[RMDB]
Structure probing data (DMS and 2A3) for a 207-nucleotide construct. The RNA was probed in 150 mM KOAc, 10 mM MgCl2 and 150 mM bicine (pH 8.5) at 24 C.

RNA sequence: GGGAACGACUCGAGUAGAGUCGAAAAACGGAUGGUACGCCAUCCGACCAUUGGGUAGAAGCGUUCAAUCAGCACCGUGACGGUGCAGAUGGGGAAUUGCCCAUGAUACGCACCAUACGUGGUGCGAAAAAGCCAUCGGUGUUCGCACCGAUGGCAACUGUCAAGAAAGGUUCGCCUUUCUUGACAGAAAAGAAACAACAACAACAAC
Reactivity to DMS in 0.01 (KOAc 150mM, MgCl2 10mM, bicine 150mM(pH8.5), 24C), signal-to-noise 1, nucleotides 027 to 156: a080c000g000g020a070u000g020g020u000a050c300g050c070c010a010u000c000c000g050a070c040c010a220u010u000g030g090g050u000a070g020a110a130g000c050g050u010u000c050a100a080u000c040a100g030c010a020c030c000g000u020g000a170c130g010g020u000g040c000a020g020a040u000g000g010g000g010a070a120u020u000g000c010c020c000a010u000g000a160u000a130c020g030c030a010c000c000a060u000a030c100g030u010g040g090u000g000c000g000a000a030a020a110a000g000c010c010a020u020c010g010g040u010g000u000u000c190g020c050a010c000c000g000a010u010g000g010c000a000a010
Reactivity to 2A3 in 0.01 (KOAc 150mM, MgCl2 10mM, bicine 150mM(pH8.5), 24C), signal-to-noise 3, nucleotides 027 to 156: a010c020g000g000a000u010g000g000u040a030c200g100c030c000a000u000c000c000g010a000c000c000a110u080u080g010g010g000u070a100g040a170a010g020c040g060u060u060c050a020a080u010c030a010g000c010a000c000c000g100u210g210a170c260g000g000u000g000c030a010g000a010u010g000g000g000g030a040a050u140u020g010c000c000c000a000u040g040a020u060a050c020g000c000a010c000c000a000u050a070c270g130u080g010g000u000g000c000g000a070a000a000a000a000g000c000c000a000u000c000g000g000u020g020u030u050c170g010c050a000c000c010g000a000u000g000g010c000a000a000

Source: RMDB library M2RFPK, as collected in RNAgym. 2A3 adducts were read by reverse transcription with SuperScript II with manganese. For DMS, 2,256 sequencing reads were counted.